Chemical mapping of a 177-nucleotide RNA with DMS and 2A3. The DMS profile rests on 4,501 reads. Source: RMDB library OK1LIB, as collected in RNAgym.
[RMDB]
RNA sequence: GGGAACGACUCGAGUAGAGUCGAAAAUCGUCGUACAGGGGUUUUACUCUUGAUGGAUUGCUAUUUAAUUUUAUUACUGACCUGUACGCUGAAGGUAAGGAUUAAAUAUGGCUAAAUUUAUUAAGAGCAAUUAUUAUUUCUUCGGAAAUAAUAAUUGAAAAGAAACAACAACAACAAC
Reactivity to DMS in 0.01 (KOAc 150mM, MgCl2 10mM, bicine 150mM(pH8.5), 24C), signal-to-noise 2, nucleotides 027 to 126: u030c050g020u010c010g010u020a000c060a030g000g000g010g030u020u000u010u000a050c000u000c010u000u000g020a020u000g000g020a020u010u000g000c050u000a020u010u000u000a010a010u000u000u010u070a070u050u010a010c010u000g000a140c030c010u000g000u000a020c030g020c070u010g020a090a100g010g000u010a030a030g020g010a050u020u000a000a020a010u020a060u040g010g000c070u030a030a030a020u000u000u000a010u010u000a010a020g010a020g010
Reactivity to 2A3 in 0.01 (KOAc 150mM, MgCl2 10mM, bicine 150mM(pH8.5), 24C), signal-to-noise 4, nucleotides 027 to 126: u090c000g040u000c010g010u020a000c010a040g040g010g020g010u020u010u050u110a020c000u000c000u000u000g010a000u000g000g020a010u020u100g030c010u020a030u010u030u000a040a030u010u050u040u190a140u080u020a040c020u030g130a130c000c020u020g010u040a030c040g020c050u090g060a070a020g010g000u020a040a030g140g020a020u010u030a010a010a010u110a070u150g050g000c020u120a210a040a090u030u010u020a020u000u010a010a000g000a000g000